[RMDB]
RNA sequence: GGGAACGACUCGAGUAGAGUCGAAAAGUCAACCAUUCUACGAGCGGUUUCCCCUCUGCGCUUUUACAAAUCUAGAUAAGUUGAAGUUCAAAGAGGUCUGUAAAACUACUACUGGUAUACCUGAAUACAUAACACAUAGCUUCGGCUAUGUGUUAUGAAAAGAAACAACAACAACAAC
Reactivity to DMS in 0.01 (KOAc 150mM, MgCl2 10mM, bicine 150mM(pH8.5), 24C), signal-to-noise 2, nucleotides 027 to 126: g000u000c080a060a050c020c040a080u000u000c040u000a100c080g000a060g030c070g010g010u000u010u000c020c030c010c080u000c040u000g030c140g030c010u000u000u000u000a050c070a050a110a060u020c080u000a080g010a120u000a090a170g000u010u000g000a040a110g030u000u000c070a080a130a120g010a040g000g000u010c070u000g000u000a020a040a060a070c070u010a010c060u010a050c060u000g000g000u000a060u000a080c020c010u000g020a090a050u000a170
Reactivity to 2A3 in 0.01 (KOAc 150mM, MgCl2 10mM, bicine 150mM(pH8.5), 24C), signal-to-noise 1, nucleotides 027 to 126: g030u000c030a000a080c010c020a060u050u030c010u110a060c030g020a000g000c020g020g000u000u020u070c020c000c040c030u000c000u020g000c030g030c040u060u020u070u020a030c020a030a260a030u110c060u120a110g030a280u080a130a070g030u000u030g000a040a000g030u000u100c030a100a050a120g030a020g000g000u000c000u000g150u080a020a100a120a020c030u120a030c000u020a030c030u030g060g000u040a030u060a060c000c010u020g050a030a000u120a030
An RNA of 177 nucleotides, treated with DMS and 2A3 and read out base by base. As a SHAPE reagent, 2A3 marks flexible, mostly unpaired nucleotides at the ribose 2'-OH. The DMS profile rests on 1,681 reads. The RNA was probed in 150 mM KOAc, 10 mM MgCl2 and 150 mM bicine (pH 8.5) at 24 C.